Background
Conditions: 150 mM KOAc, 10 mM MgCl2 and 150 mM bicine (pH 8.5), 24 C. Structure probing data (DMS and 2A3) for a 177-nucleotide construct. The 2A3 profile rests on 1,253 reads. For DMS, 1,558 sequencing reads were counted.
RNA sequence: GGGAACGACUCGAGUAGAGUCGAAAAGGAGAUCGAAGAAGACCGACGUCAGCACGGUCGGGAUGUAGGUCCGCAUGCAUCCAAGUUGACGAAACUUGACGAUUUCCAAAGCGGACAAGAAGUCAAACAGGAUAGCCAUGUUCGCAUGGCUAUCCUGAAAAGAAACAACAACAACAAC
Reactivity to DMS in 0.01 (KOAc 150mM, MgCl2 10mM, bicine 150mM(pH8.5), 24C), signal-to-noise 2, nucleotides 027 to 126: g040g060a010g000a000u030c010g020a110a300g090a200a090g010a000c060c000g030a110c050g060u140c080a200g040c050a120c000g000g000u000c000g030g000g000a000u000g010u030a000g000g000u020c010c000g090c010a040u000g000c050a020u000c020c000a040a000g040u000u000g000a080c160g000a080a000a010c000u000u000g000a070c020g000a000u000u010u000c000c090a090a110a140g040c020g000g000a000c010a110a050g010a100a140g000u080c070a050a160a170
Reactivity to 2A3 in 0.01 (KOAc 150mM, MgCl2 10mM, bicine 150mM(pH8.5), 24C), signal-to-noise 2, nucleotides 027 to 126: g020g000a000g000a040u040c020g020a150a010g040a090a040g000a080c000c010g040a060c070g160u190c010a080g020c090a040c070g050g000u010c010g030g010g000a000u000g000u030a000g000g040u000c000c020g030c000a000u000g000c000a000u000c000c000a000a000g000u000u030g080a100c140g060a100a000a000c020u010u000g010a010c020g020a010u020u000u020c000c000a000a050a000g000c000g000g000a010c000a000a010g190a050a000g110u120c070a030a030a060